[RMDB]
RNA sequence: GGGAACGACUCGAGUAGAGUCGAAAAUGUGCCAGCACCUCUACUUUCUGUGUCGCUUACCAAAGCAAGUGGGCGACCGUAGCGUUGAUGAGACUUGUGUUACGAAAAAGAAGCAAGGCUGGCAAGAGUCGUUCGACCUAUUCGUAGGUCGAGCGACAAAAGAAACAACAACAACAAC
Reactivity to 2A3 in 0.01 (KOAc 150mM, MgCl2 10mM, bicine 150mM(pH8.5), 24C), signal-to-noise 6, nucleotides 027 to 126: u250g020u040g000c000c000a000g010c030a100c030c010u040c020u050a050c020u080u150u090c030u030g080u020g000u040c000g000c000u010u020a000c060c010a070a060a060g110c050a100a080g040u010g010g000g000c000g000a000c010c000g000u010a000g000c020g060u060u080g060a200u170g070a080g040a100c050u130u110g060u020g010u100u020a010c010g040a070a040a040a030a030g040a010a010g000c050a030a000g020g000c000u000g010g020c000a000a010g020a010
Reactivity to DMS in 0.01 (KOAc 150mM, MgCl2 10mM, bicine 150mM(pH8.5), 24C), signal-to-noise 4, nucleotides 027 to 126: u030g010u020g000c000c000a010g000c000a130c100c010u000c060u000a160c040u000u030u010c010u020g010u020g060u000c000g000c000u010u020a010c010c070a090a140a190g030c290a130a130g000u000g010g030g000c020g000a010c000c000g030u010a010g000c080g020u000u010g000a120u040g000a160g020a300c070u010u050g020u040g050u000u040a020c010g010a050a070a120a110a050g010a060a070g000c110a030a060g000g030c000u000g020g000c010a040a040g000a180